[RMDB]
RNA sequence: GGGAACGACUCGAGUAGAGUCGAAAAUUUUGAAGCUUGUUCCUUUGCUAGAAUAUAAAUAAGCCAGCAUAUGUUUCACAUUGCUUUAGUGCUUUGUUCUUUUCUAUUUUAUUCUUUAUGAUUAAAGUGUUAAUCACUUUUUCGAAAGUGAUUAACAAAAAGAAACAACAACAACAAC
Reactivity to DMS in 0.01 (KOAc 150mM, MgCl2 10mM, bicine 150mM(pH8.5), 24C), signal-to-noise 3, nucleotides 027 to 126: u020u010u030u040g000a080a140g020c170u010u000g000u010u000c010c010u000u000u020g030c120u000a050g010a060a070u020a110u010a050a050a070u030a040a030g010c030c020a060g000c010a020u070a010u000g010u010u030u020c170a060c020a020u000u000g010c010u000u010u020a050g020u030g000c010u000u000u020g000u010u010c060u030u010u000u010c030u020a070u000u000u010u030a030u000u000c010u020u010u000a050u060g000a080u000u000a030a030a040g010
Reactivity to 2A3 in 0.01 (KOAc 150mM, MgCl2 10mM, bicine 150mM(pH8.5), 24C), signal-to-noise 6, nucleotides 027 to 126: u150u150u060u150g080a050a010g040c050u040u050g010u010u030c000c000u070u070u050g000c030u040a030g060a130a050u150a000u090a150a190a040u110a030a010g020c010c010a010g000c000a020u060a040u300g070u090u240u160c110a050c000a020u010u000g020c000u090u100u180a100g020u090g080c000u020u010u060g010u020u040c030u000u090u010u000c020u020a200u070u110u030u040a080u170u000c020u060u150u070a190u240g060a070u000u160a050a070a010g060